[RMDB]
RNA sequence: GGGAACGACUCGAGUAGAGUCGAAAAGUGGCAGCAAGGCUUGUUUCUCGGCUGCCUGUAUUGACUUUCUGUUUUGUCUCUGGGGAAUGUCAUCCUGGAUCAUGCUCUCACUGGGUGGUGCUGUGUCCAUUAACAGGUGUGAAAAGCCCUGCUCCGGAGCCCAUAUAGGUUUCGACCUAUAUGGGCUAAAAGAAACAACAACAACAAC
Reactivity to 2A3 in 0.01 (KOAc 150mM, MgCl2 10mM, bicine 150mM(pH8.5), 24C), signal-to-noise 1, nucleotides 027 to 156: g060u020g020g030c060a010g020c010a070a060g070g050c060u100u110g020u090u110u010c040u000c000g140g020c020u030g020c000c020u000g040u040a160u020u050g010a010c010u060u100u000c020u100g180u160u050u160u130g080u030c060u010c050u100g050g000g000g000a010a040u080g000u010c010a060u030c020c030u030g000g030a020u040c060a060u180g010c020u000c010u030c050a070c150u160g110g100g000u040g000g040u020g010c020u070g030u020g040u080c020c010a020u080u040a080a010c030a050g000g030u100g000u000g190a000a010a100a100g020c000c000c000u010g010c010u050c020c010g060g020

Conditions: 150 mM KOAc, 10 mM MgCl2 and 150 mM bicine (pH 8.5), 24 C. An RNA of 207 nucleotides, treated with 2A3 and read out base by base. Reactivities are given for positions 27 through 156. 2A3 is a SHAPE reagent: it acylates the 2'-hydroxyl of flexible nucleotides of all four kinds. The 2A3 profile rests on 565 reads.